The record gives the reactivity of an RNA of 207 nucleotides to 2A3 and DMS. The data come from the RNA Mapping Database (RMDB), library RNAMAK. The RNA was probed in 150 mM KOAc, 10 mM MgCl2 and 150 mM bicine (pH 8.5) at 24 C. Reactivities are rounded to 0.1 and cut off at 0 and 3. Reactivities are given for positions 27 through 156. The DMS profile rests on 3,507 reads.
RNA sequence: GGGAACGACUCGAGUAGAGUCGAAAACCGUAGGAAGCAAUAGGUGAUGACCCAUACAGAACCGUACAUUCGAAAGAGUGUACUCAGUAUGUAUGGCAAGCCUGAUGCUUCCUAAACGGAAAACGAUCACGACAUGGUUCGCCAUGUCGUGAUCGAAGAUGGCACUAUAGUUCGCUAUAGUGCCAUCAAAAGAAACAACAACAACAAC
Reactivity to 2A3 in 0.01 (KOAc 150mM, MgCl2 10mM, bicine 150mM(pH8.5), 24C), signal-to-noise 4, nucleotides 027 to 156: c000c000g020u010a020g010g010a000a000g000c020a050a090u030a160g010g030u030g050a300u160g050a120c030c000c000a000u000a000c000a000g010a010a000c000c010g000u000a000c000a000u000u000c010g050a080a080a040g000a030g000u000g000u000a000c000u000c000a000g010u000a000u020g000u000a000u000g010g000c000a010a020g000c000c000u030g000a010u020g000c000u010u000c000c000u000a000a000a000c010g030g030a070a070a010a100c010g000a020u010c010a000c000g020a000c010a010u000g000g080u070u090c220g050c100c000a000u000g000u000c000g000u000g000a000u000c000g000a000a010
Reactivity to DMS in 0.01 (KOAc 150mM, MgCl2 10mM, bicine 150mM(pH8.5), 24C), signal-to-noise 2, nucleotides 027 to 156: c010c010g020u000a030g000g000a000a000g010c000a010a160u000a030g030g030u000g020a100u000g010a070c300c000c000a010u000a010c000a070g010a190a140c270c300g000u010a030c000a000u000u000c000g000a200a160a200g010a050g030u000g000u000a000c050u000c030a070g040u000a110u000g020u000a010u000g010g020c020a030a180g000c010c010u030g010a110u000g030c020u050u000c010c000u000a000a020a080c030g000g000a060a090a100a160c030g020a000u000c020a050c020g010a030c000a030u000g040g030u000u010c300g040c030c000a000u000g030u000c000g010u000g000a000u010c000g000a020a120